RNA sequence: GGGAACGACUCGAGUAGAGUCGAAAACUCAUGGCGUCAGACUUUAAUGGCCACCCAUAUGGUUCGGGGCGGUUGUCCAAUUAAAAUAUAUCUUAAACACAGAACAGGAAAUGUGAUGCUGAGAUAGUAGGAUUACUAUCUUCGGAUAGUAAUCCUAAAAAGAAACAACAACAACAAC
Reactivity to DMS in 0.01 (KOAc 150mM, MgCl2 10mM, bicine 150mM(pH8.5), 24C), signal-to-noise 4, nucleotides 027 to 126: c010u000c040a120u000g010g000c050g010u010c040a080g020a080c060u000u000u000a100a070u000g010g010c030c040a080c090c020c040a090u010a090u010g010g030u000u000c100g020g010g010g010c060g010g000u000u000g010u010c050c060a060a160u020u000a040a040a100a100u010a120u020a040u000c030u010u000a050a060a160c050a050c040a040g000a120a120c140a060g000g010a030a080a110u000g000u000g010a110u010g010c110u000g000a030g000a030u000a060g010
Reactivity to 2A3 in 0.01 (KOAc 150mM, MgCl2 10mM, bicine 150mM(pH8.5), 24C), signal-to-noise 2, nucleotides 027 to 126: c020u010c000a060u100g090g020c040g070u050c030a030g070a130c030u070u080u210a090a080u100g050g030c020c000a040c000c000c000a080u140a090u160g110g010u070u170c060g000g010g010g000c090g100g030u080u150g040u000c000c020a100a070u080u250a030a090a040a020u300a030u020a030u000c010u040u120a070a110a010c020a000c010a040g100a100a020c040a090g080g180a040a120a120u050g010u020g020a050u040g000c080u010g060a020g000a140u030a030g060